[RMDB]
RNA sequence: GGGAACGACUCGAGUAGAGUCGAAAAAGAUCCACGCUACGGCGUGGAUCACACGAUCAUCCCUAUUGGGACGGAAGUAGGCAUAGUGCCGAAGGAACGCAUUAGUCAUGCGCUACGGCGCAUGACACACAUCAGAGUCACUUCGGUGACUCUGAAAGUUUGCUUAUUACUUCGGUAAUAAGCAAACAAAAGAAACAACAACAACAAC
Reactivity to 2A3 in 0.01 (KOAc 150mM, MgCl2 10mM, bicine 150mM(pH8.5), 24C), signal-to-noise 3, nucleotides 027 to 156: a000g000a010u000c000c000a020c020g020c000u030a040c250g100g000c020g000u000g000g010a000u010c000a000c000a010c010g050a020u090c020a030u010c040c000c010u070a250u090u270g040g000g020a040c030g040g010a080a050g040u060a020g000g030c070a100u110a210g120u080g170c000c010g010a000a010g050g070a060a030c080g050c110a090u080u180a040g010u010c010a000u010g000c000g000c010u030a040c250g080g010c000g000c000a000u000g000a000c000a000c000a000c020a060u020c000a000g000a010g000u010c000a010c010u030u040c080g050g000u000g000a000c000u000c000u000g000a000a000a000
Reactivity to DMS in 0.01 (KOAc 150mM, MgCl2 10mM, bicine 150mM(pH8.5), 24C), signal-to-noise 1, nucleotides 027 to 156: a120g040a000u000c000c000a020c000g020c000u000a130c200g080g010c010g050u000g000g000a010u000c000a020c110a090c070g000a150u000c070a130u000c000c000c050u000a120u000u010g030g000g000a070c000g020g020a060a090g030u010a090g000g000c050a210u000a070g010u020g020c000c020g020a080a150g030g000a080a120c070g000c020a070u000u000a110g050u000c060a010u000g010c000g050c000u000a070c260g010g000c000g020c000a000u000g000a010c000a000c070a040c020a120u000c020a010g010a040g000u000c010a010c000u000u020c300g040g010u000g000a000c000u000c000u000g010a030a080a110